Record summary:
An RNA of 177 nucleotides, treated with DMS and 2A3 and read out base by base. It was measured as part of the RMDB library OK1LIB. For 2A3 the reverse transcriptase was SuperScript II with manganese. The reactions ran in a buffer of 150 mM KOAc, 10 mM MgCl2 and 150 mM bicine (pH 8.5), at 24 C.
[RMDB]
RNA sequence: GGGAACGACUCGAGUAGAGUCGAAAACAGCAUGGAAACAAGGAUACAGGAUACUCGAAUAAACUUUCCAAGGAGAGAUGAGCUAACUGCUGAGGGCAUUCUGUACCAUGCCCAGCUUGAUGACACCAUAAUAAAGUCUGUUCGCAGACUUUAUUAUAAAAGAAACAACAACAACAAC
Reactivity to DMS in 0.01 (KOAc 150mM, MgCl2 10mM, bicine 150mM(pH8.5), 24C), signal-to-noise 9, nucleotides 027 to 126: c120a030g000c020a080u010g020g000a120a070a110c070a050a090g010g000a180u010a020c020a010g000g010a030u000a050c020u000c010g000a130a130u030a090a090a090c020u000u010u000c000c030a120a180g030g000a030g000a030g000a080u020g010a060g010c020u010a060a110c180u040g000c010u000g000a180g000g000g010c040a000u010u000c010u000g010u000a010c020c020a040u000g000c050c000c000a030g000c030u000u010g010a100u020g000a120c120a150c050c050
Reactivity to 2A3 in 0.01 (KOAc 150mM, MgCl2 10mM, bicine 150mM(pH8.5), 24C), signal-to-noise 9, nucleotides 027 to 126: c030a010g020c070a170u040g010g020a100a080a050c030a090a150g040g010a050u020a030c000a000g010g010a010u020a050c010u010c020g030a070a050u160a150a130a050c010u030u030u000c020c020a070a140g130g010a040g010a010g010a060u150g050a010g020c030u070a050a140c090u220g000c010u050g050a090g010g010g000c010a000u020u000c010u020g010u010a020c010c000a010u020g010c010c000c000a020g000c010u080u100g050a070u070g020a100c030a030c110c020